[RMDB]
RNA sequence: GGGAACGACUCGAGUAGAGUCGAAAAUACAAGCUAUUCUAUGGCUCAUCAUGUCUGAAUGGCUGAGAUAGUCAAUGUGUGUCACAGGGACUGGAGGCCUACCCUGCUUGGACAAUAUAAGGGCCACAUGGACGUCAAAGUUCGCUUUGACGUCCAUAAAAGAAACAACAACAACAAC
Reactivity to DMS in 0.01 (KOAc 150mM, MgCl2 10mM, bicine 150mM(pH8.5), 24C), signal-to-noise 2, nucleotides 027 to 126: u010a120c110a100a050g000c020u000a040u010u000c030u010a190u020g000g000c000u010c090a110u020c210a090u000g000u000c020u000g010a120a070u010g000g020c000u010g010a120g020a110u030a040g000u000c010a040a060u000g010u000g000u020g060u000c060a020c010a040g040g010g000a080c000u000g010g040a290g000g000c020c010u010a130c000c020c000u000g040c070u020u000g010g000a050c050a030a120u000a210u000a110a060g000g020g000c000c010a060c300
Reactivity to 2A3 in 0.01 (KOAc 150mM, MgCl2 10mM, bicine 150mM(pH8.5), 24C), signal-to-noise 2, nucleotides 027 to 126: u120a020c040a010a040g020c010u020a030u300u000c030u020a170u200g000g000c020u040c000a100u040c000a010u050g030u020c040u090g090a240a140u090g010g000c000u000g020a030g000a070u150a050g000u020c010a040a050u060g070u020g020u070g110u140c020a000c010a020g040g010g000a050c020u060g020g040a040g050g060c030c010u000a010c010c000c000u080g000c040u000u040g010g030a010c040a020a030u190a010u030a140a090g000g010g000c020c000a040c000
Structure probing data (DMS and 2A3) for a 177-nucleotide construct. For 2A3 the reverse transcriptase was SuperScript II with manganese. The reactions ran in a buffer of 150 mM KOAc, 10 mM MgCl2 and 150 mM bicine (pH 8.5), at 24 C. Reactivities are given for positions 27 through 126.